About this RNA: Conditions: 150 mM KOAc, 10 mM MgCl2 and 150 mM bicine (pH 8.5), 24 C. Structure probing data (2A3) for a 177-nucleotide construct. For 2A3, 564 sequencing reads were counted.
[RMDB]
RNA sequence: GGGAACGACUCGAGUAGAGUCGAAAACAUGACGCUUUAACGUCGCAGCUCACCACCGCCUGACCAUUCUGCCAGGAGACAACGGUUGCCCACUCUUUAAUCAUUGUACUGCCCUGAAUUUGAUACUGCUCCUGCUAAACUUCGGUUUAGCAGGAGCAAAAGAAACAACAACAACAAC
Reactivity to 2A3 in 0.01 (KOAc 150mM, MgCl2 10mM, bicine 150mM(pH8.5), 24C), signal-to-noise 2, nucleotides 027 to 126: c060a150u230g040a020c070g000c040u180u110u210a170a040c010g000u000c000g090c000a050g110c000u010c000a010c010c000a040c000c000g030c000c000u100g000a100c060c040a080u010u000c000u050g040c020c000a030g000g010a080g010a000c010a040a030c060g050g000u080u120g000c030c000c000a070c000u080c000u060u020u200a040a030u010c020a000u000u050g010u020a060c000u040g000c000c000c000u010g120a140a140u000u030u110g040a030u150a140c030u030